[RMDB]
RNA sequence: GGGAACGACUCGAGUAGAGUCGAAAAUGAACGAAAGUUAGGGGAUCGAAGACGAUCAGAUACCGUCGUAGUCUUAACCAUAAACUAUGCCGACUAGGGAUCGGGCGAUGUUAUUAUUUUGACUCGCGCGUACUGGGGCUUUCGAGCCCCAGUACGCAAAAGAAACAACAACAACAAC
Reactivity to 2A3 in 0.01 (KOAc 150mM, MgCl2 10mM, bicine 150mM(pH8.5), 24C), signal-to-noise 1, nucleotides 027 to 126: u000g020a000a040c250g000a000a170a060g000u010u000a000g000g000g000g070a000u040c000g000a030a030g210a050c000g000a060u120c000a040g070a000u060a060c010c000g000u000c000g000u040a000g000u000c010u080u100a060a060c000c000a060u070a010a000a000c000u030a030u300g030c000c000g000a060c100u060a110g070g000g200a140u060c000g000g000g000c000g010a040u300g110u050u060a060u050u100a110u000u210u040u000g000a070c000u060c000g000c000